[RMDB]
RNA sequence: GGGAACGACUCGAGUAGAGUCGAAAAGUAUGGAUGCCACCGUGACGGCUCAAUCACACAAGUGCCAACGAUAACGAGGCGCUCGCUAUUGCUGCGUAACUGACGGCCUGACGGUCUGAAGUUACAAAAAACGAAAAGUGGUUCGCCACUUUUCGAACGGUAUGAUCAAGUUCGCUUGAUCAUACCGAAAAGAAACAACAACAACAAC
Reactivity to DMS in 0.01 (KOAc 150mM, MgCl2 10mM, bicine 150mM(pH8.5), 24C), signal-to-noise 2, nucleotides 027 to 156: g000u000a090u000g030g030a070u010g040c040c030a080c050c150g020u010g000a060c060g030g050c050u010c020a090a160u000c070a100c050a020c020a000a070g110u000g010c000c000a060a190c040g000a140u000a040a140c070g010a230g000g020c000g020c030u000c000g000c050u000a010u010u000g000c010u010g050c070g000u020a020a040c020u000g000a300c300g000g030c000c010u000g060a150c300g030g040u000c030u000g030a280a020g020u000u000a040c010a010a030a050a070a050a170c020g010a000a020a010a040g060u000g000g020u000u010c300g000c040c010a010c000u000u000u000u010c000g020a050a090
Reactivity to 2A3 in 0.01 (KOAc 150mM, MgCl2 10mM, bicine 150mM(pH8.5), 24C), signal-to-noise 4, nucleotides 027 to 156: g080u090a080u190g040g050a090u090g020c030c010a040c030c040g030u040g070a040c060g020g010c020u040c060a070a100u140c040a050c030a000c040a130a090g020u030g040c020c010a100a070c110g060a160u120a230a020c050g020a070g030g010c010g020c020u080c020g040c050u090a080u170u270g020c060u040g000c040g010u000a000a010c000u010g020a010c000g000g020c000c010u180g100a070c080g000g000u000c000u000g010a010a000g000u000u010a000c000a010a000a000a000a000a000c010g000a010a000a000a000g010u000g010g020u070u050c100g040c060c000a000c000u000u000u000u000c000g000a040a020
Structure probing data (DMS and 2A3) for a 207-nucleotide construct. 2A3 adducts were read by reverse transcription with SuperScript II with manganese. The RNA was probed in 150 mM KOAc, 10 mM MgCl2 and 150 mM bicine (pH 8.5) at 24 C.